[RMDB]
RNA sequence: GGGAACGACUCGAGUAGAGUCGAAAAUCCGACGAGCUGAACGCUUUCGAAGGAAAGCUUGACCAGCUAAUAUUCUGCAACGCCAUUACGAGGACUGCCCUUAGAGGCUCAUGGCGAUAGGUCACCCAAAACUAUUUGAGGUUCGCCUCAAAUAGAACUCUACUCUAAACUUCGGUUUAGAGUAGAGAAAAGAAACAACAACAACAAC
Reactivity to 2A3 in 0.01 (KOAc 150mM, MgCl2 10mM, bicine 150mM(pH8.5), 24C), signal-to-noise 4, nucleotides 027 to 156: u030c020c010g010a060c050g030a010g010c010u040g050a130a040c080g000c010u050u060u040c030g100a090a070g120g030a030a070a030g000c000u050u100g050a070c040c010a010g000c010u030a080a070u110a110u170u060c080u100g080c060a090a070c020g000c000c010a050u100u090a050c100g030a080g080g060a090c080u090g020c000c010c020u080u200a110g060a160g140g000c010u020c030a010u000g000g000c000g020a030u080a060g010g000u020c010a050c000c010c020a020a080a060a070c000u000a010u000u010u000g000a000g000g000u040u090c160g040c060c000u000c000a000a000a000u000a000g000a000a000
Reactivity to DMS in 0.01 (KOAc 150mM, MgCl2 10mM, bicine 150mM(pH8.5), 24C), signal-to-noise 1, nucleotides 027 to 156: u000c010c010g050a140c050g020a060g020c000u010g020a100a120c210g000c030u000u000u000c010g030a290a200g010g000a020a040a010g020c000u000u000g010a170c080c000a100g030c040u010a080a150u000a130u010u010c090u000g010c040a140a210c020g030c000c000a050u010u010a160c050g000a130g020g010a130c050u000g000c000c010c000u120u000a100g030a140g010g030c000u010c040a030u000g030g030c000g000a110u010a030g000g000u000c000a170c000c000c010a050a100a090a190c000u000a030u000u000u000g020a010g010g060u000u000c300g000c010c000u000c010a010a000a010u000a000g000a000a130
Structure probing data (2A3 and DMS) for a 207-nucleotide construct.
DMS (dimethyl sulfate) methylates the pairing face of unpaired adenines and cytosines.
2A3 adducts were read by reverse transcription with SuperScript II with manganese.
For DMS, 2,160 sequencing reads were counted.
The reactions ran in a buffer of 150 mM KOAc, 10 mM MgCl2 and 150 mM bicine (pH 8.5), at 24 C.
For DMS the reverse transcriptase was MarathonRT.